This 177-nucleotide RNA was probed chemically with 2A3 and DMS.
The data come from the RNA Mapping Database (RMDB), library TTRINS.
For DMS the reverse transcriptase was MarathonRT.
DMS (dimethyl sulfate) methylates the pairing face of unpaired adenines and cytosines.
RNA sequence: GGGAACGACUCGAGUAGAGUCGAAAAGAUAUGGAAUACUGGGAGCUGAUUUGUCCCUUGAAGGUGCCAUCAUCGGAAACGAUGAUGGCACUGGAGGACAAACAGCGAAGAACAGUAUUCCUAAGUCGAUAACAAAUUGGUUCGCCAAUUUGUUAUCAAAAGAAACAACAACAACAAC
Reactivity to 2A3 in 0.01 (KOAc 150mM, MgCl2 10mM, bicine 150mM(pH8.5), 24C), signal-to-noise 1, nucleotides 027 to 126: g020a020u240a060u210g020g010a000a010u000a010c000u010g010g000g060a090g010c010u020g180a300u030u000u010g020u030c010c010c000u020u060g030a050a020g000g020u010g000c050c000a000u010c000a000u020c010g020g000a100a060a020c010g000a000u010g000a010u000g000g020c020a000c000u000g000g010a000g000g000a010c000a000a020a000c010a000g000c020g030a080a090g000a030a000c000a010g000u010a010u000u000c000c000u000a070a000g040u020c030
Reactivity to DMS in 0.01 (KOAc 150mM, MgCl2 10mM, bicine 150mM(pH8.5), 24C), signal-to-noise 4, nucleotides 027 to 126: g000a130u000a300u020g010g000a010a000u010a000c000u000g000g000g000a220g020c010u010g010a230u000u000u000g010u000c000c000c300u000u020g010a210a170g000g000u000g010c000c000a000u000c000a010u000c000g000g000a110a150a190c020g000a000u000g010a000u000g010g000c000a000c000u000g000g000a040g020g010a020c010a010a000a010c000a010g010c010g000a070a090g020a110a140c000a010g010u000a000u000u000c000c010u000a020a110g010u000c110